This 207-nucleotide RNA was probed chemically with DMS and 2A3.
Values cover nucleotides 27 to 156.
As a SHAPE reagent, 2A3 marks flexible, mostly unpaired nucleotides at the ribose 2'-OH.
It was measured as part of the RMDB library RNAMAK.
DMS adducts were read by reverse transcription with MarathonRT.
[RMDB]
RNA sequence: GGGAACGACUCGAGUAGAGUCGAAAAUGGUCUUUCGAGACCACUGACGACCUUUGUGUAUUAAGCCAGAGGGAGACGAACCAAGCCCAUUGGGCUUGUCCCGUCAUCGAUCUCUGGCCUCUAAUACACUCUGGUAACAUAAUGCCUUCGGGCAUAAAGAUACUUCUAUUUUCGAAUAGAAGUAUCUAAAAGAAACAACAACAACAAC
Reactivity to DMS in 0.01 (KOAc 150mM, MgCl2 10mM, bicine 150mM(pH8.5), 24C), signal-to-noise 3, nucleotides 027 to 156: u000g010g000u000c000u000u000u000c200g030a060g020a020c000c000a020c010u000g010a200c070g030a080c000c000u000u000u000g020u000g000u000a030u010u000a020a160g020c010c010a040g030a040g020g010g020a300g010a050c010g000a150a110c140c010a020a040g020c000c000c020a300u000u000g060g040g040c010u000u000g000u000c030c040c000g000u000c030a170u000c080g010a300u000c000u000c020u000g010g000c020c000u000c040u010a020a030u000a020c010a020c030u000c030u030g000g000u010a060a120c070a150u000a150a100u000g010c000c010u000u010c300g050g020g020c000a010u000a030a100
Reactivity to 2A3 in 0.01 (KOAc 150mM, MgCl2 10mM, bicine 150mM(pH8.5), 24C), signal-to-noise 9, nucleotides 027 to 156: u080g000g000u010c020u050u130u130c260g070a020g010a020c020c020a020c080u120g090a060c070g050a020c010c000u020u010u010g000u010g000u000a000u010u010a080a050g000c000c000a000g000a000g010g010g000a040g000a000c000g000a020a010c060c020a010a000g010c030c000c050a250u190u300g010g000g000c000u000u010g030u050c040c050c000g000u010c010a200u300c020g060a150u030c000u000c000u000g000g010c000c000u000c000u000a000a000u000a000c000a000c000u000c000u000g000g020u010a020a010c020a080u290a240a020u040g000c010c000u040u090c280g080g020g010c010a010u100a030a060